This 177-nucleotide RNA was probed chemically with DMS and 2A3. Conditions: 150 mM KOAc, 10 mM MgCl2 and 150 mM bicine (pH 8.5), 24 C. The data come from the RNA Mapping Database (RMDB), library TTRDES. The 2A3 profile rests on 1,972 reads.

[RMDB]
RNA sequence: GGGAACGACUCGAGUAGAGUCGAAAAAAAGAUAUGGACUCCAACAGCCUAUGCGUAGGAUAGCACUUGGAUUUAGCUUCGGAAACGAAGCUUGUCAGUGCCUUAGGACAUGGAGUCCUAAGUCAAAGACAAGACUUCAGUUCGCUGAAGUCUUGUCAAAAGAAACAACAACAACAAC
Reactivity to DMS in 0.01 (KOAc 150mM, MgCl2 10mM, bicine 150mM(pH8.5), 24C), signal-to-noise 2, nucleotides 027 to 126: a140a090a120g020a060u010a300u000g000g030a040c000u000c010c000a060a110c260a140g030c020c010u020a070u010g010c240g000u010a090g000g000a140u000a070g000c010a000c010u000u010g050g000a040u000u000u000a030g010c000u000u040c010g010g000a100a110a130c000g020a030a000g010c000u000u000g000u000c000a020g000u000g030c010c060u000u010a000g000g020a070c120a150u010g020g010a100g000u000c000c000u010a000a020g000u000c030a080a170a080
Reactivity to 2A3 in 0.01 (KOAc 150mM, MgCl2 10mM, bicine 150mM(pH8.5), 24C), signal-to-noise 2, nucleotides 027 to 126: a010a010a010g080a070u130a140u160g000g000a010c020u020c010c010a120a080c070a250g000c010c000u030a030u080g100c180g300u210a160g080g250a170u100a080g040c030a000c030u080u260g210g000a090u240u300u280a030g020c000u000u010c000g040g000a000a060a030c010g020a000a000g000c010u010u000g010u000c000a000g000u000g010c040c000u030u050a020g030g010a030c020a150u130g010g020a000g000u000c000c000u000a000a000g010u000c000a000a000a140